[RMDB]
RNA sequence: GGGAACGACUCGAGUAGAGUCGAAAAGGGUUUGAGCCAUCGCCCGAAUAGGAUGGAUGAUACAAGUCGACAUUGUACGCGACGUAGUACGUACUCAUUAGUGCGAAAGCACGGUUAGUCCGACUCGGCAGGGACGAUCUUCUGUCAAUACUUAGAACCUGCAUUUAUUAUUCGUAAUAAAUGCAGGAAAAGAAACAACAACAACAAC
Reactivity to DMS in 0.01 (KOAc 150mM, MgCl2 10mM, bicine 150mM(pH8.5), 24C), signal-to-noise 4, nucleotides 027 to 156: g010g000g010u000u010u000g010a140g020c000c030a070u000c050g020c030c010c020g050a090a100u000a090g000g000a070u000g020g020a100u000g010a150u000a070c070a060a090g030u000c030g010a090c050a190u010u010g000u000a050c040g030c030g020a130c100g010u000a140g030u000a040c020g010u000a030c020u010c170a110u000u000a110g070u000g010c010g010a140a090a210g030c010a010c020g010g000u000u000a130g000u000c020c040g010a040c030u010c010g010g010c060a080g000g020g020a090c030g010a080u010c060u000u000c040u020g020u000c010a040a130u000a070c070u000u010a100g020a090a300
Reactivity to 2A3 in 0.01 (KOAc 150mM, MgCl2 10mM, bicine 150mM(pH8.5), 24C), signal-to-noise 6, nucleotides 027 to 156: g030g020g020u080u120u140g070a020g030c000c020a040u040c020g020c020c010c020g050a070a100u140a110g050g010a020u030g000g030a050u060g030a010u070a100c080a160a020g030u030c020g040a070c070a130u080u190g090u150a040c060g000c010g050a020c040g000u010a010g010u020a090c020g000u020a010c010u010c010a040u040u080a100g000u000g010c010g060a100a030a000g030c000a000c000g000g010u010u030a020g000u000c040c020g020a020c030u030c050g030g000c030a040g010g040g000a020c050g040a060u030c020u100u010c020u050g040u020c040a080a130u100a150c060u120u130a050g040a080a070